[RMDB]
RNA sequence: GGGAACGACUCGAGUAGAGUCGAAAAACUACAGCUUUUUUUGUGAGGUGCCCAGGGCAGAUUCCUGUGAGCAUACGUACAAUGGCUUCUGCUACUCAGUCAACACAAAUCUACUAGAUGAGCCUGACAUGCGGUAUGGAUUCGUCCAUACCGCAUGAAAAGAAACAACAACAACAAC
Reactivity to 2A3 in 0.01 (KOAc 150mM, MgCl2 10mM, bicine 150mM(pH8.5), 24C), signal-to-noise 2, nucleotides 027 to 126: a000c130u220a090c050a080g000c010u210u190u030u080u040u090u030g050u010g050a110g010g030u040g000c010c000c050a020g000g010g060c100a150g000a300u220u130c010c020u070g050u080g010a050g080c020a030u050a200c080g050u040a020c050a010a050u070g040g010c000u080u030c050u200g130c000u020a060c010u020c030a010g060u030c010a170a000c060a040c030a100a110a090u020c020u190a200c050u060a060g020a090u020g030a070g000c000c040u020g000a030
Reactivity to DMS in 0.01 (KOAc 150mM, MgCl2 10mM, bicine 150mM(pH8.5), 24C), signal-to-noise 2, nucleotides 027 to 126: a090c080u020a080c280a100g000c030u000u000u000u010u030u000u000g010u010g010a110g020g010u000g020c010c000c090a060g040g000g050c140a040g000a210u000u000c030c010u000g030u000g000a150g040c050a030u010a050c060g000u020a030c060a020a070u000g020g000c030u010u000c030u030g000c050u020a060c070u000c010a050g020u000c000a060a050c130a050c140a010a040a010u000c010u040a100c080u010a060g000a060u020g000a070g030c020c030u000g000a180